Chemical mapping of a 177-nucleotide RNA with 2A3 and DMS. Values cover nucleotides 27 to 126. For 2A3 the reverse transcriptase was SuperScript II with manganese. For 2A3, 13,446 sequencing reads were counted. Conditions: 150 mM KOAc, 10 mM MgCl2 and 150 mM bicine (pH 8.5), 24 C. The DMS profile rests on 20,947 reads.
RNA sequence: GGGAACGACUCGAGUAGAGUCGAAAAUGCGGCGAGCUCGCAACAGCACCGGUAUCGCGCCCACGAUGACCAGUGCGGAGACCACAAUUACGGCGUACAGCACCCACGUGGUGUGCGGGUUUCCGGCCAUAGGCAAGGUAUUCGUACCUUGCCUAUGAAAAGAAACAACAACAACAAC
Reactivity to 2A3 in 0.01 (KOAc 150mM, MgCl2 10mM, bicine 150mM(pH8.5), 24C), signal-to-noise 6, nucleotides 027 to 126: u170g020c010g010g010c060g070a040g030c020u000c030g000c020a060a090c030a090g050c010a010c020c010g000g010u040a020u050c010g000c000g020c020c010c000a010c010g090a160u060g120a050c010c040a010g000u010g000c030g000g030a120g030a070c010c020a040c040a100a060u280u180a090c130g040g010c050g030u100a070c060a070g010c020a060c020c030c010a070c100g000u050g000g060u070g020u030g030c030g030g010g000u000u050u000c000c000g050g000c020
Reactivity to DMS in 0.01 (KOAc 150mM, MgCl2 10mM, bicine 150mM(pH8.5), 24C), signal-to-noise 9, nucleotides 027 to 126: u010g020c020g020g010c160g010a070g010c050u010c020g020c020a080a110c110a170g010c040a060c010c030g000g010u000a030u000c000g000c040g010c020c020c010a210c010g000a040u000g010a040c040c070a060g010u000g000c000g000g010a150g000a080c010c010a060c090a110a110u010u010a130c160g010g010c020g010u000a100c180a150g010c060a050c020c060c060a110c160g010u000g010g000u000g020u000g010c020g020g000g000u000u000u000c020c010g000g010c280